This 177-nucleotide RNA was probed chemically with 2A3. For 2A3 the reverse transcriptase was SuperScript II with manganese. Source: RMDB library OK1LIB, as collected in RNAgym. For 2A3, 783 sequencing reads were counted.
RNA sequence: GGGAACGACUCGAGUAGAGUCGAAAAGCGGAAAAGAAGGUCACACAAAUGUUCAACACGCGGCUGAGCCGGGUUUUGAACCCGGGACCUUGUGGUUAGAAGGCAGAGAUCUUACCACUGCGCCAACGGCGUGGAGUCUGUUCGCAGACUCCACGCCAAAAGAAACAACAACAACAAC
Reactivity to 2A3 in 0.01 (KOAc 150mM, MgCl2 10mM, bicine 150mM(pH8.5), 24C), signal-to-noise 2, nucleotides 027 to 126: g010c030g000g060a050a000a080a020g240a000a040g040g000u000c020a030c020a000c020a170a090a140u230g000u010u000c030a030a000c020a020c010g170c030g040g010c140u110g040a000g000c000c000g150g000g000u020u020u000u020g030a040a020c000c040c040g070g010g000a010c000c000u010u010g000u030g010g000u030u080a010g040a110a050g180g020c050a020g060a030g020a300u020c000u000u010a000c000c010a000c020u080g010c050g000c020c000a110a060c110